[RMDB]
RNA sequence: GGGAACGACUCGAGUAGAGUCGAAAAGAAAAGAGGGGCAAGUAAUACCUUUUAAACUCUUAUAAUGUUCCCUGAUGGAUAUUGGGCCAAGUUAUAAGGAGAUGUUUAAAAGGUUUUGCCUCUCUAAUAUGCACUAGAAUUUCGAUUCUAGUGCAUAAAAAGAAACAACAACAACAAC
Reactivity to 2A3 in 0.01 (KOAc 150mM, MgCl2 10mM, bicine 150mM(pH8.5), 24C), signal-to-noise 3, nucleotides 027 to 126: g120a020a120a020a000g000a010g000g030g010g010c010a020a000g010u040a040a030u030a150c010c010u000u000u000u000a010a010a000c020u020c000u010u000a010u010a000a000u050g070u300u300c010c000c000u020g010a040u050g160g140a100u150a030u270u090g010g020g000c020c040a060a030g000u000u000a000u000a000a000g040g020a260g020a090u230g030u000u000u000a000a000a000a000g000g000u000u000u000u000g000c020c000u000c010u000c000u000a000a000
Reactivity to DMS in 0.01 (KOAc 150mM, MgCl2 10mM, bicine 150mM(pH8.5), 24C), signal-to-noise 6, nucleotides 027 to 126: g010a130a080a110a030g000a000g010g000g010g000c010a000a010g010u010a040a020u010a100c000c000u000u000u000u000a000a000a010c000u020c000u000u000a000u000a000a000u000g000u010u010c300c000c000u010g000a020u000g010g030a130u040a050u000u010g000g010g010c060c150a010a090g000u000u000a010u000a020a010g000g030a140g010a090u020g010u000u000u000a000a010a010a000g010g000u000u000u000u000g000c000c000u000c010u000c000u010a010a050